[RMDB]
RNA sequence: GGGAACGACUCGAGUAGAGUCGAAAAGCGUACACAUCUUGCCUAUGGCAUUUCCCUGGACGUAAGCGGUGACCGCAAGGUAGCAACCUGGAGUUAGCUCGGCUGUGAGUACGUGCACGGAAAGCAGCUCUUCCUACCUGUUCGCAGGUAGGAAGAGAAAAGAAACAACAACAACAAC
Reactivity to 2A3 in 0.01 (KOAc 150mM, MgCl2 10mM, bicine 150mM(pH8.5), 24C), signal-to-noise 1, nucleotides 027 to 126: g000c010g010u090a010c070a000c000a100u030c040u090u120g020c020c010u080a130u160g040g000c020a000u000u040u000c020c020c050u020g070g040a010c030g030u050a030a030g050c030g050g090u060g020a030c020c000g000c040a030a040g060g030u050a060g020c000a010a060c010c010u020g040g010a000g000u050u070a030g060c020u000c060g020g080c000u030g010u010g040a020g000u020a010c010g030u110g190c100a070c080g000g030a010a010a000g000c010a000g000
Reactivity to DMS in 0.01 (KOAc 150mM, MgCl2 10mM, bicine 150mM(pH8.5), 24C), signal-to-noise 2, nucleotides 027 to 126: g040c080g050u010a020c060a100c070a050u000c080u000u000g020c050c030u000a030u000g040g030c080a060u000u000u010c020c030c020u000g010g030a070c040g000u010a080a070g030c030g010g010u010g000a120c020c040g040c170a100a070g010g020u000a080g000c110a050a050c080c030u010g000g010a080g000u000u000a060g000c030u000c120g030g000c030u000g000u000g000a060g020u010a080c060g020u020g000c100a090c080g010g020a180a080a150g030c040a080g000
The data come from the RNA Mapping Database (RMDB), library RFMREP. This 177-nucleotide RNA was probed chemically with 2A3 and DMS. 2A3 adducts were read by reverse transcription with SuperScript II with manganese. For DMS the reverse transcriptase was MarathonRT. The 2A3 profile rests on 1,219 reads.